Chemical mapping of a 177-nucleotide RNA with 2A3 and DMS. High 2A3 reactivity points to a flexible backbone, as in loops and unpaired stretches. Values are in units of 0.01, from 0 to 300, in steps of 10. Conditions: 150 mM KOAc, 10 mM MgCl2 and 150 mM bicine (pH 8.5), 24 C. For DMS the reverse transcriptase was MarathonRT. Source: RMDB library OK1LIB, as collected in RNAgym. The 2A3 profile rests on 1,954 reads.

RNA sequence: GGGAACGACUCGAGUAGAGUCGAAAACACCGCCUGGGAUCUCAGGCCAGGAGACAGUCGGAGACUCUGUCGUGGCGGGAGGCGCCGCAAUCUUUGAUGGGUCCUGAAGGAGAUGGAUGGUGAGAAGCUCACCACGUCCAUUCGUGGACGUGGUGAGAAAAGAAACAACAACAACAAC
Reactivity to 2A3 in 0.01 (KOAc 150mM, MgCl2 10mM, bicine 150mM(pH8.5), 24C), signal-to-noise 3, nucleotides 027 to 126: c040a020c020c010g010c010c000u040g000g030g100a100u030c040u000c020a040g090g000c010c010a030g000g000a020g010a020c020a020g080u060c000g080g000a010g020a040c010u000c090u120g110u130c060g090u110g010g030c030g030g020g050a130g130g070c030g000c000c000g000c020a010a120u030c020u000u080u120g050a070u030g020g060g150u060c000c000u040g010a070a040g110g000a020g000a020u020g010g060a020u040g010g020u040g040a090g050a060a010g030
Reactivity to DMS in 0.01 (KOAc 150mM, MgCl2 10mM, bicine 150mM(pH8.5), 24C), signal-to-noise 1, nucleotides 027 to 126: c070a230c040c020g000c010c000u000g060g000g030a050u000c050u040c080a100g000g000c080c000a000g000g000a040g020a060c090a050g000u030c000g080g000a080g010a080c040u030c160u000g000u030c140g000u010g000g000c000g000g030g070a200g040g000c000g020c000c010g000c070a070a060u000c010u000u000u000g060a050u000g020g000g010u000c000c010u000g000a040a240g040g000a030g000a020u020g030g010a100u000g010g000u000g000a080g000a260a110g020